[RMDB]
This 177-nucleotide RNA was probed chemically with DMS and 2A3. For 2A3 the reverse transcriptase was SuperScript II with manganese. The data come from the RNA Mapping Database (RMDB), libraries RFM100 and RFMREP.
RNA sequence: GGGAACGACUCGAGUAGAGUCGAAAAGUUGCUGUCGGGACCCGUCCCGCAGCCAGUCGGAAGAAGAAUAAAACUGCCUCGAGGCAGCGCACAGACUGGUUGGAUCGCUCGACGAUCAUGGCAGCAUUGGGUAUCAAAGUUUCGACUUUGAUACCCAAAAAGAAACAACAACAACAAC
Reactivity to DMS in 0.01 (KOAc 150mM, MgCl2 10mM, bicine 150mM(pH8.5), 24C), signal-to-noise 2, nucleotides 027 to 126: g000u000u000g010c000u000g000u000c010g000g000g000a000c010c230c090g030u040c000c000c000g000c000a000g010c020c000a020g000u000c000g000g020a140a140g010a250a140g000a110a120u080a000a090a120a100c000u000g030c010c010u040c300g010a180g000g010c000a000g030c040g030c210a090c150a190g000a020c000u000g000g010u020u090g000g000a010u010c000g000c030u030c180g010a180c040g040a020u000c050a080u000g000g000c000a000g000c000a150u050
Reactivity to 2A3 in 0.01 (KOAc 150mM, MgCl2 10mM, bicine 150mM(pH8.5), 24C), signal-to-noise 6, nucleotides 027 to 126: g010u010u010g000c000u000g010u010c000g000g000g030a040c030c030c080g160u070c020c000c000g020c000a000g000c000c000a000g000u010c010g090g050a100a030g040a080a010g070a170a100u230a160a120a030a020c000u010g000c010c000u250c150g060a250g020g000c000a010g000c010g010c010a120c010a090g010a000c000u010g000g000u000u000g000g000a000u010c000g010c060u190c150g300a300c000g000a070u000c000a000u030g000g000c000a000g000c000a010u020

The RNA was probed in 150 mM KOAc, 10 mM MgCl2 and 150 mM bicine (pH 8.5) at 24 C. For DMS, 2,265 sequencing reads were counted.